[RMDB]
RNA sequence: GGGAACGACUCGAGUAGAGUCGAAAAUUAAGUUUAUGAGAAUUUCAAUAUUAUAUAUGUUCCCGUCUAUCACAAGACAUCAGUUACUGAGCAUAUUUUGCUGGAAAGGGAAUAUGCUGAAGUAAUGAUGAAUCAUGAACCGCCUCAGGCUGGAAACCACUAUAUUUACCUUCGGGUAAAUAUAGUGAAAAGAAACAACAACAACAAC
Reactivity to 2A3 in 0.01 (KOAc 150mM, MgCl2 10mM, bicine 150mM(pH8.5), 24C), signal-to-noise 2, nucleotides 027 to 156: u070u000a130a000g050u020u100u160a080u030g010a110g020a160a200u010u130u300c040a020a030u110a190u300u090a080u090a090u090a030u300g060u000u000c010c030c000g010u000c080u130a160u160c070a120c060a130a070g040a040c000a010u000c010a050g120u010u000a000c000u040g000a010g000c000a010u030a060u030u040u010u140g260c060u060g060g160a130a020a020g080g000g000a000a000u000a000u000g000c000u020g070a100a030g010u000a000a000u000g010a010u010g050a080a070u020c000a020u080g010a070a080c000c000g090c020c030u180c110a080g050g000c030u070g080g020a160a000a000c050